RNA sequence: GGGAACGACUCGAGUAGAGUCGAAAAGAUAUGGAUACGCUUUUGACGCUCGUGACAUCGGAAACGAUGUCUCGAGCGAUAAGCGUGAUCCUAAGUCAAAACAGAGGGGUCUUCGGACCCCUCUGAACCUUUUUAUUACGUUCGCGUAAUAAAAAGGAAAAGAAACAACAACAACAAC
Reactivity to DMS in 0.01 (KOAc 150mM, MgCl2 10mM, bicine 150mM(pH8.5), 24C), signal-to-noise 4, nucleotides 027 to 126: g010a040u000a300u000g000g000a020u000a010c000g010c000u000u000u010u000g010a210c100g010c000u010c000g000u000g010a010c000a010u010c000g010g000a090a110a180c000g030a010u000g000u010c000u000c000g010a010g000c000g010a000u000a000a000g010c000g010u000g010a010u000c000c000u010a060a130g010u010c040a080a080a120a210c000a010g000a010g010g020g010g010u000c000u000u020c220g020g020a010c000c010c000c000u000c000u000g000a030a090
Reactivity to 2A3 in 0.01 (KOAc 150mM, MgCl2 10mM, bicine 150mM(pH8.5), 24C), signal-to-noise 1, nucleotides 027 to 126: g020a040u090a010u170g000g000a000u010a000c010g030c000u160u080u100u130g260a080c050g000c010u000c000g020u010g000a000c000a000u000c000g000g030a030a040a040c010g000a000u010g000u000c010u000c010g000a010g000c020g010a000u000a020a000g000c000g020u010g010a000u020c000c010u020a050a010g090u090c030a000a010a140a180c000a010g040a030g010g020g000g000u020c020u100u140c260g110g000a030c000c010c030c000u000c000u000g000a010a000
Structure probing data (DMS and 2A3) for a 177-nucleotide construct. The DMS profile rests on 5,308 reads. Source: RMDB library TTRDEL, as collected in RNAgym.